The data come from the RNA Mapping Database (RMDB), library OK1LIB. An RNA of 177 nucleotides, treated with 2A3 and DMS and read out base by base. The reactions ran in a buffer of 150 mM KOAc, 10 mM MgCl2 and 150 mM bicine (pH 8.5), at 24 C. For DMS the reverse transcriptase was MarathonRT. For DMS, 2,266 sequencing reads were counted. The 2A3 profile rests on 1,158 reads.

RNA sequence: GGGAACGACUCGAGUAGAGUCGAAAAGGGGUCCACGGAACAGCUCACAUGUGGGCAAUCAUUGCUGGUUUGUAGUUUUGUGUGCGAAGUACUUUAUUGCCAGCUCAACAGUGCUUCAGGUGGUAUCCCUCCAGUCCUAGUUCGCUAGGACUGGAGGAAAAGAAACAACAACAACAAC
Reactivity to 2A3 in 0.01 (KOAc 150mM, MgCl2 10mM, bicine 150mM(pH8.5), 24C), signal-to-noise 3, nucleotides 027 to 126: g000g000g010g010u070c030c000a000c020g000g000a030a030c020a040g030c020u040c030a080c000a140u220g030u120g080g000g030c020a000a030u160c060a030u050u100g000c000u040g100g060u020u050u140g170u110a110g010u030u040u000u180g090u020g020u030g060c070g000a040a010g010u020a050c020u070u180u090a100u160u050g040c030c020a030g020c010u050c000a060a260c060a030g020u050g040c020u010u010c030a070g000g090u070g030g020u160a070u060c000
Reactivity to DMS in 0.01 (KOAc 150mM, MgCl2 10mM, bicine 150mM(pH8.5), 24C), signal-to-noise 2, nucleotides 027 to 126: g000g000g000g050u000c000c000a000c040g020g010a050a130c140a120g000c010u000c020a060c030a130u000g040u010g000g000g000c000a160a100u010c040a020u000u020g010c020u000g000g000u010u000u110g030u030a050g040u000u010u010u000g030u030g000u030g000c080g000a040a020g000u000a000c030u000u010u050a080u000u000g010c000c010a040g000c010u040c070a030a070c300a060g030u000g000c000u000u000c010a150g030g050u000g010g000u010a070u020c000